[RMDB]
RNA sequence: GGGAACGACUCGAGUAGAGUCGAAAAGACGGUCCGCGAUGCCAUCGCAUACGGACGGCCCGAUGCCACCGAUGCCCAGGUCGAACGGGCUGCGCGGGAGGUCGGUGCCCAUCCGAUGAUCACCGCAACCGAACCGGAGGUUCGCCUCCGGUUCGGUAAAAGAAACAACAACAACAAC
Reactivity to 2A3 in 0.01 (KOAc 150mM, MgCl2 10mM, bicine 150mM(pH8.5), 24C), signal-to-noise 3, nucleotides 027 to 126: g100a040c080g010g040u030c020c010g040c200g030a010u090g010c020c070a170u140c180g000c010a000u080a120c030g000g010a030c020g010g010c000c020c010g090a090u270g080c030c010a050c000c020g010a040u120g010c030c000c040a070g020g070u060c040g020a080a050c050g020g000g000c000u040g010c050g000c000g010g000g010a050g050g000u000c000g000g030u080g050c000c000c000a030u030c020c020g040a030u030g020a040u080c050a050c150c000g000c040a050
Reactivity to DMS in 0.01 (KOAc 150mM, MgCl2 10mM, bicine 150mM(pH8.5), 24C), signal-to-noise 2, nucleotides 027 to 126: g000a140c090g000g000u020c050c000g000c100g000a070u000g000c000c100a160u050c140g050c000a040u050a060c040g000g000a040c150g020g000c060c050c050g030a130u000g010c040c030a090c030c040g020a050u060g000c030c030c050a170g000g070u010c110g090a070a120c170g020g000g030c010u050g010c090g020c070g000g000g000a070g000g000u010c000g020g060u010g010c030c040c030a050u060c040c010g000a010u000g000a150u000c040a080c000c010g010c010a220
The data come from the RNA Mapping Database (RMDB), library OK1LIB. This 177-nucleotide RNA was probed chemically with 2A3 and DMS. For DMS, 1,743 sequencing reads were counted. The reactions ran in a buffer of 150 mM KOAc, 10 mM MgCl2 and 150 mM bicine (pH 8.5), at 24 C. For 2A3 the reverse transcriptase was SuperScript II with manganese.